Conditions: 150 mM KOAc, 10 mM MgCl2 and 150 mM bicine (pH 8.5), 24 C. The record gives the reactivity of an RNA of 177 nucleotides to DMS.
RNA sequence: GGGAACGACUCGAGUAGAGUCGAAAAGAUAUGGAAAUGCGUCCUAGCUUUGAUCGAUCCUACCCACCCACUGACUCGGAAACGAGUCGGUGGAGGGAUCGGGAGCUAGGACGCAUUUCCUAAGUCACAAUGUGCUUGACUUCGGUCAAGCACAUUGAAAAGAAACAACAACAACAAC
Reactivity to DMS in 0.01 (KOAc 150mM, MgCl2 10mM, bicine 150mM(pH8.5), 24C), signal-to-noise 1, nucleotides 027 to 126: g020a010u010a090u010g000g000a000a030a000u000g000c000g050u000c000c000u000a010g000c000u010u000u010g040a020u040c000g000a000u000c000c010u020a050c120c060c160a300c200c000c020a000c000u000g020a000c060u020c000g000g000a010a020a030c000g010a040g010u000c000g000g020u000g010g000a040g010g010g020a010u000c010g000g020g000a020g020c000u000a000g000g000a000c000g040c010a000u000u000u000c000c000u000a010a050g000u000c020a240
Background
It was measured as part of the RMDB library TTRINS. Values cover nucleotides 27 to 126.